An RNA of 177 nucleotides, treated with DMS and 2A3 and read out base by base. Reactivities are given for positions 27 through 126. Conditions: 150 mM KOAc, 10 mM MgCl2 and 150 mM bicine (pH 8.5), 24 C. It was measured as part of the RMDB library M2PK50.
RNA sequence: GGGAACGACUCGAGUAGAGUCGAAAAGGAUGCUCGUUCGCGAGCAUCCACUGAGAUAGCCACUAUAAAGAUUAAGUCUUCCUUCUCGAGACAGGAUGUCUAUGCUCCUGGCCUUCGGGCCAGGAAAGAUCUAUCAUCAUUUCGAUGAUGAUAGAUCAAAAGAAACAACAACAACAAC
Reactivity to DMS in 0.01 (KOAc 150mM, MgCl2 10mM, bicine 150mM(pH8.5), 24C), signal-to-noise 5, nucleotides 027 to 126: g010g010a010u000g000c000u000c010g020u000u010c210g020c010g010a010g010c000a010u000c010c000a030c140u000g000a100g010a060u010a070g020c030c030a100c120u000a100u010a070a090a110g000a110u010u010a090a100g000u000c010u000u000c040c040u000u010c020u000c050g000a040g000a030c030a080g010g010a070u000g010u000c020u000a110u010g020c140u000c000c000u000g010g010c000c000u000u010c170g030g010g010c000c000a000g000g000a010a020a070
Reactivity to 2A3 in 0.01 (KOAc 150mM, MgCl2 10mM, bicine 150mM(pH8.5), 24C), signal-to-noise 6, nucleotides 027 to 126: g000g010a000u000g000c000u000c010g020u050u100c260g010c020g090a000g020c000a000u000c000c000a000c010u060g020a020g020a030u080a030g040c030c040a040c040u120a090u160a300a200a050g110a110u140u170a130a060g030u020c000u040u040c020c010u060u030c030u030c050g050a050g000a010c040a020g110g080a080u090g020u010c020u070a110u140g050c020u010c000c010u000g010g000c000c000u040u020c200g060g000g000c000c000a000g000g000a000a000a000